[RMDB]
RNA sequence: GGGAACGACUCGAGUAGAGUCGAAAAGAUAUGGACAAGAACUACGUUCGAACAGGCGAAGAACUCGGAAACGAGGGAGCCUGGGAGAACGCUUGUCCUAAGUCAAAGUAUCCGUUCGCGGAUACAACAAAAUUCCUAGGUUCGCCUAGGAAUUUUGAAAAGAAACAACAACAACAAC
Reactivity to 2A3 in 0.01 (KOAc 150mM, MgCl2 10mM, bicine 150mM(pH8.5), 24C), signal-to-noise 2, nucleotides 027 to 126: g010a030u110a070u210g000g000a000c000a000a010g040a150a100c130u210a080c300g000u010u010c000g000a060a000c010a010g010g010c030g110a300a020g010a070a080c000u000c000g020g070a080a070a040c000g000a020g000g020g000a010g000c010c000u000g030g000g000a050g010a000a000c000g000c010u010u010g000u000c000c010u020a060a030g030u010c040a010a020a170g000u000a010u000c010c030g010u020u060c300g010c010g050g000a010u020a020c010a010a020
Reactivity to DMS in 0.01 (KOAc 150mM, MgCl2 10mM, bicine 150mM(pH8.5), 24C), signal-to-noise 3, nucleotides 027 to 126: g010a010u000a300u000g000g000a000c000a000a000g020a110a080c060u010a300c010g040u000u000c010g000a300a300c010a010g010g010c000g000a080a120g010a120a260c000u000c010g010g010a130a040a190c010g010a010g000g000g000a030g010c000c000u000g010g010g030a300g000a000a040c010g000c000u010u020g000u000c000c000u000a040a080g000u010c020a050a080a110g010u000a000u000c000c000g000u000u010c210g010c040g020g020a000u000a010c010a090a210